[RMDB]
RNA sequence: GGGAACGACUCGAGUAGAGUCGAAAAAUGGCCUCGGUGGCUCCGACCGUGACCAGCACCUCGGUCUCGGGGUCGUAGUCGACGCCGAAAUGGCGCCGCCGCUGGGCGGCGAUGGCCCGCCGUAGCGAAGCUCCGUAUCAUUCGUGAUACGGAGCUUAAAAGAAACAACAACAACAAC
Reactivity to DMS in 0.01 (KOAc 150mM, MgCl2 10mM, bicine 150mM(pH8.5), 24C), signal-to-noise 2, nucleotides 027 to 126: a090u010g000g020c040c020u010c000g010g040u000g010g010c010u000c040c000g010a030c020c010g020u000g000a080c010c020a130g010c150a190c210c070u010c080g010g010u030c040u010c010g010g000g010g010u000c050g020u000a050g010u000c010g010a030c040g000c000c000g010a060a100a090u010g020g010c010g020c000c010g060c060c000g030c110u010g000g010g050c010g040g000c030g000a020u000g000g000c300c020c090g020c010c040g020u010a080g000c100g000